The record gives the reactivity of an RNA of 177 nucleotides to DMS and 2A3.
For DMS the reverse transcriptase was MarathonRT.
2A3 adducts were read by reverse transcription with SuperScript II with manganese.
The 2A3 profile rests on 2,313 reads.
Source: RMDB library OK2TRN, as collected in RNAgym.

[RMDB]
RNA sequence: GGGAACGACUCGAGUAGAGUCGAAAAGCCACGGGAUCGCUCGGCAAGUGGGGCGCAGCUGCAGCUGCAGCCGGCGCGGCCGUCGCUGCCGCUGUCGGCGUCGGCGUCGCCAAGAGCGUCAAGAGCGGACGUUGAUUCAAUUCGUUGAAUCAACGUCAAAAGAAACAACAACAACAAC
Reactivity to DMS in 0.01 (KOAc 150mM, MgCl2 10mM, bicine 150mM(pH8.5), 24C), signal-to-noise 3, nucleotides 027 to 126: g010c010c010a100c140g000g000g000a080u010c030g000c000u000c010g000g000c050a090a100g010u000g010g000g000g010c010g030c010a140g020c020u000g010c060a060g000c030u000g010c020a040g000c010c020g000g000c020g020c230g020g010c030c020g030u010c170g010c040u000g010c010c040g010c040u000g000u010c050g030g010c010g000u010c110g000g000c000g030u000c020g010c010c020a080a100g010a160g010c030g020u010c040a110a070g010a060g000c060g010
Reactivity to 2A3 in 0.01 (KOAc 150mM, MgCl2 10mM, bicine 150mM(pH8.5), 24C), signal-to-noise 2, nucleotides 027 to 126: g050c000c030a040c050g090g000g030a110u130c020g010c030u010c000g020g020c070a110a080g140u040g060g020g020g010c000g000c020a010g000c010u100g010c020a030g000c010u040g010c000a020g010c000c020g020g000c250g000c040g160g020c030c010g080u080c060g000c030u030g000c000c010g040c050u070g090u160c040g010g000c020g010u040c080g030g020c000g000u070c030g080c020c000a020a040g040a020g030c030g040u060c040a070a040g030a030g040c080g040